[RMDB]
RNA sequence: GGGAACGACUCGAGUAGAGUCGAAAAGAAUGCCCAUUCGUGGGCAUUCCACGGCAGCGAAGCCGAAAGGCAUUUUAUGCGUACGCUGGCGAAAGCCUAAAAAAGCUCCACUUUUCGAAGUGGAGAAGUUCACUAACCCAUUCGUGGGUUAGUGAACAAAAGAAACAACAACAACAAC
Reactivity to DMS in 0.01 (KOAc 150mM, MgCl2 10mM, bicine 150mM(pH8.5), 24C), signal-to-noise 1, nucleotides 027 to 126: g010a010a000u000g000c030c000c000a020u010u020c220g040u010g030g010g000c010a010u000u000c010c070a070c030g020g010c010a010g000c010g000a180a100g010c010c030g020a060a100a090g000g000c010a110u010u030u000u010a090u000g010c180g000u020a110c060g020c040u000g020g000c010g010a140a090a150g020c010c000u010a010a070a070a040a060a090g010c000u020c010c000a010c000u000u000u000u020c100g030a010a000g010u000g000g000a010g000a010a020
Reactivity to 2A3 in 0.01 (KOAc 150mM, MgCl2 10mM, bicine 150mM(pH8.5), 24C), signal-to-noise 1, nucleotides 027 to 126: g020a000a000u000g010c000c000c000a010u000u110c260g050u020g000g020g000c000a000u000u000c000c010a020c000g100g000c000a010g010c000g020a070a000g000c020c000g030a080a030a000g030g000c020a030u040u050u040u190a180u230g050c050g040u090a040c010g000c020u010g000g030c020g050a140a030a000g060c000c020u130a080a060a020a030a010a000g040c000u000c000c000a000c010u040u050u030u070c170g050a020a000g000u000g000g020a000g000a000a010

Structure probing data (DMS and 2A3) for a 177-nucleotide construct.
For DMS the reverse transcriptase was MarathonRT.
The RNA was probed in 150 mM KOAc, 10 mM MgCl2 and 150 mM bicine (pH 8.5) at 24 C.
It was measured as part of the RMDB library M2PK50.
For DMS, 1,007 sequencing reads were counted.
For 2A3, 1,743 sequencing reads were counted.
Reactivities are rounded to 0.1 and cut off at 0 and 3.